Chemical mapping of a 177-nucleotide RNA with DMS and 2A3.
RNA sequence: GGGAACGACUCGAGUAGAGUCGAAAAGGUCUCGAUUUCCUGGGGGGUGGGCUCAGUCUGUUCCACCUCCCCUCAGACUAGCCUAGAUCAAAGGCAGGGUUCUCUGCAUACUAGUAUGGUGGGUCAACAGGAUAGAGUACUUCGGUACUCUAUCCUGAAAAGAAACAACAACAACAAC
Reactivity to DMS in 0.01 (KOAc 150mM, MgCl2 10mM, bicine 150mM(pH8.5), 24C), signal-to-noise 4, nucleotides 027 to 126: g000g010u000c010u000c080g010a100u010u010u010c030c010u010g050g010g020g000g000g010u000g000g000g010c030u010c170a130g030u040c180u000g010u000u020c000c010a020c010c000u020c000c000c000c030u000c070a070g000a060c020u010a160g000c020c000u000a130g000a090u020c120a080a120a090g000g000c030a050g000g000g010u030u030c040u010c030u010g010c010a070u010a100c060u000a060g010u020a070u010g010g030u000g000g000g010u020c060a110a200
Reactivity to 2A3 in 0.01 (KOAc 150mM, MgCl2 10mM, bicine 150mM(pH8.5), 24C), signal-to-noise 5, nucleotides 027 to 126: g080g020u060c030u040c110g090a120u070u040u080c000c010u010g000g010g000g000g000g000u000g000g010g000c020u050c100a130g190u090c140u130g060u120u120c010c000a010c000c000u030c000c000c000c000u000c010a040g000a020c010u020a020g010c000c000u050a090g010a180u130c070a080a060a020g050g000c020a000g070g030g030u280u060c100u010c000u060g000c000a020u070a140c020u010a050g080u050a100u110g050g030u010g020g070g000u000c010a030a030
Background:
Values cover nucleotides 27 to 126. For DMS the reverse transcriptase was MarathonRT. It was measured as part of the RMDB libraries RFM100 and RFMREP. The reactions ran in a buffer of 150 mM KOAc, 10 mM MgCl2 and 150 mM bicine (pH 8.5), at 24 C. Values are in units of 0.01, from 0 to 300, in steps of 10.